[RMDB]
RNA sequence: GGGAACGACUCGAGUAGAGUCGAAAAGAUAUGGACCUGAACUACAACGGGUGUAGCGACGAAGUCGGAAACGACAGAGCUACUAACCGUUGCAGGUCCUAAGUCAAAACAGCGGUUCGCCGCUGAACAUUCCUCACAGCUUCGGCUGUGAGGAAUGAAAAGAAACAACAACAACAAC
Reactivity to 2A3 in 0.01 (KOAc 150mM, MgCl2 10mM, bicine 150mM(pH8.5), 24C), signal-to-noise 2, nucleotides 027 to 126: g050a010u040a060u140g000g000a020c010c000u030g040a060a130c100u150a040c290a000a010c000g030g000g050u090g000u020a010g060c040g300a300c050g080a300a050g000u030c000g060g010a000a050a030c010g000a000c030a030g080a020g010c010u020a000c010u030a190a100c000c000g000u000u010g020c010a000g030g040u000c000c000u000a000a010g000u000c000a000a020a140a150c010a010g000c000g000g040u070u150c240g050c070c010g000c020u000g010a010a010
Reactivity to DMS in 0.01 (KOAc 150mM, MgCl2 10mM, bicine 150mM(pH8.5), 24C), signal-to-noise 2, nucleotides 027 to 126: g000a060u010a300u030g000g000a010c000c030u000g010a100a080c190u030a300c030a010a000c000g000g000g000u000g000u000a000g000c030g020a130c240g020a120a110g000u040c000g020g000a030a060a240c000g010a000c000a010g000a170g010c010u000a020c000u000a070a090c020c000g030u000u000g010c010a000g000g000u000c030c000u000a030a030g010u010c090a050a110a080a190c000a000g000c000g000g000u000u060c200g000c000c000g010c040u010g000a060a100
This 177-nucleotide RNA was probed chemically with 2A3 and DMS. Source: RMDB library TTRDEL, as collected in RNAgym. The reactions ran in a buffer of 150 mM KOAc, 10 mM MgCl2 and 150 mM bicine (pH 8.5), at 24 C. The 2A3 profile rests on 1,904 reads.